RNA sequence: GGGAACGACUCGAGUAGAGUCGAAAAAUAAACAUGUUUGGCCUAAAAUGCAUGCCCUCUAUGAAACAGGUCCACCACUGGAGCUGCAUCGUUUCUGCCCCGGUGACUGGGUCUACGUUAAGAGAUACGAUACUGUUAGGUUCGCCUAACAGUAUCGAAAAGAAACAACAACAACAAC
Reactivity to 2A3 in 0.01 (KOAc 150mM, MgCl2 10mM, bicine 150mM(pH8.5), 24C), signal-to-noise 4, nucleotides 027 to 126: a000u170a030a060a000c030a030u050g020u060u060u100g160g020c010c020u070a060a080a080a100u130g000c000a010u040g020c010c030c000u000c030u050a150u150g140a080a050a010c020a020g000g000u000c000c000a000c010c000a010c010u000g010g000a020g000c020u070g030c080a150u110c090g060u050u140u010c010u020g010c000c010c000c000g000g000u000g010a010c020u000g010g010g000u000c010u020a040c050g030u030u080a090a010g050a000g000a060u070a190
Reactivity to DMS in 0.01 (KOAc 150mM, MgCl2 10mM, bicine 150mM(pH8.5), 24C), signal-to-noise 4, nucleotides 027 to 126: a070u020a090a100a180c060a030u000g010u000u000u000g020g010c060c060u000a050a070a070a060u000g000c030a030u000g010c050c030c000u000c040u000a060u000g010a140a050a070c070a040g000g000u000c000c000a010c060c030a020c030u000g010g000a020g000c000u000g020c210a130u000c130g000u000u000u000c020u000g010c010c010c000c030g010g020u000g010a070c170u000g000g000g020u000c010u000a050c170g010u010u000a080a110g010a070g010a100u000a180
The record gives the reactivity of an RNA of 177 nucleotides to 2A3 and DMS. The DMS profile rests on 4,864 reads. 2A3 adducts were read by reverse transcription with SuperScript II with manganese. For DMS the reverse transcriptase was MarathonRT. The RNA was probed in 150 mM KOAc, 10 mM MgCl2 and 150 mM bicine (pH 8.5) at 24 C. Source: RMDB library OK2TRN, as collected in RNAgym.